[RMDB]
RNA sequence: GGGAACGACUCGAGUAGAGUCGAAAAGGGAAUUGUGGUAGUUACAAUUCAAGAUGAGAUUUGGGUGGGGACACAGCCAAACAGUAUCACUGAUUAUGAGAAACAUUAAAAUCAGAACUACAAGGAGAUAUCUCAUUCCAGCUAAAUGGCUUGUGUCGUUCUCAGUGAUAUUCGUAUCACUGAGAACAAAAGAAACAACAACAACAAC
Reactivity to DMS in 0.01 (KOAc 150mM, MgCl2 10mM, bicine 150mM(pH8.5), 24C), signal-to-noise 2, nucleotides 027 to 156: g000g000g000a040a090u000u000g020u010g020g010u000a070g010u020u000a100c050a040a060u010u000c040a100a090g010a140u020g030a110g000a110u000u000u000g030g020g010u010g010g020g000g020a100c040a020c030a040g090c020c020a020a040a090c070a140g020u000a180u020c080a070c020u000g020a050u000u000a060u000g020a120g010a160a110a130c120a160u000u000a060a070a090a120u000c050a140g020a060a110c090u010a100c090a070a080g000g020a070g020a100u000a070u000c020u000c050a050u000u000c010c000a140g000c090u000a050a030a110u000g000g000c000u010u000g030u000g000u000c020
Reactivity to 2A3 in 0.01 (KOAc 150mM, MgCl2 10mM, bicine 150mM(pH8.5), 24C), signal-to-noise 7, nucleotides 027 to 156: g010g000g030a030a000u040u030g010u070g090g090u140a100g060u130u120a030c020a030a050u050u100c050a030a060g050a050u100g020a010g010a040u050u040u080g080g010g080u250g010g000g000g010a000c000a000c000a010g000c010c000a040a050a020c060a040g030u060a040u240c060a020c070u010g010a030u030u080a030u110g080a090g110a140a150a030c060a050u100u190a060a120a020a040u020c010a010g050a140a020c050u100a040c070a080a070g050g010a030g010a030u090a040u050c020u010c030a020u070u030c020c010a010g000c040u060a070a070a070u040g010g000c000u120u140g000u000g000u000c060
The record gives the reactivity of an RNA of 207 nucleotides to DMS and 2A3. For 2A3, 4,844 sequencing reads were counted. Conditions: 150 mM KOAc, 10 mM MgCl2 and 150 mM bicine (pH 8.5), 24 C. It was measured as part of the RMDB library OK3TST. For 2A3 the reverse transcriptase was SuperScript II with manganese. As a SHAPE reagent, 2A3 marks flexible, mostly unpaired nucleotides at the ribose 2'-OH. For DMS, 3,757 sequencing reads were counted.